[RMDB]
RNA sequence: GGGAACGACUCGAGUAGAGUCGAAAAGGAAUCAAUAGGUAGAGCGAUAACAACUACACUACAACUAUCAAAACGUGAUGGGGGAGUAGCACUUUUGCUUUCCAACUUACGUGAAGCGGGAGCGCCCAUCCAAAUCAUGUUUCGACAUGAUUUGGAUAAAAGAAACAACAACAACAAC
Reactivity to DMS in 0.01 (KOAc 150mM, MgCl2 10mM, bicine 150mM(pH8.5), 24C), signal-to-noise 9, nucleotides 027 to 126: g010g020a120a090u000c080a090a090u010a050g000g010u000a040g010a080g020c080g020a100u010a080a100c160a070a080c060u010a050c080a100c050u000a050c080a070a110c080u000a050u010c100a070a060a120a050c040g000u000g010a020u000g010g000g000g000g000a030g000u000a010g020c020a060c300u000u000u000u000g020c010u000u000u000c020c000a020a030c040u000u000a020c030g010u000g010a070a080g010c140g010g000g010a070g020c060g000c010c030c040
Reactivity to 2A3 in 0.01 (KOAc 150mM, MgCl2 10mM, bicine 150mM(pH8.5), 24C), signal-to-noise 3, nucleotides 027 to 126: g030g020a050a080u110c040a040a080u070a070g050g000u030a010g010a020g090c070g080a090u120a150a060c060a040a050c020u090a020c080a030c060u080a040c020a150a040c020u070a050u210c050a030a070a050a060c050g030u040g040a060u070g020g030g000g000g000a050g170u050a010g020c010a020c040u100u080u190u180g000c000u020u020u000c010c010a020a020c030u050u050a010c030g040u040g030a050a010g020c030g020g030g010a030g040c020g020c010c010c000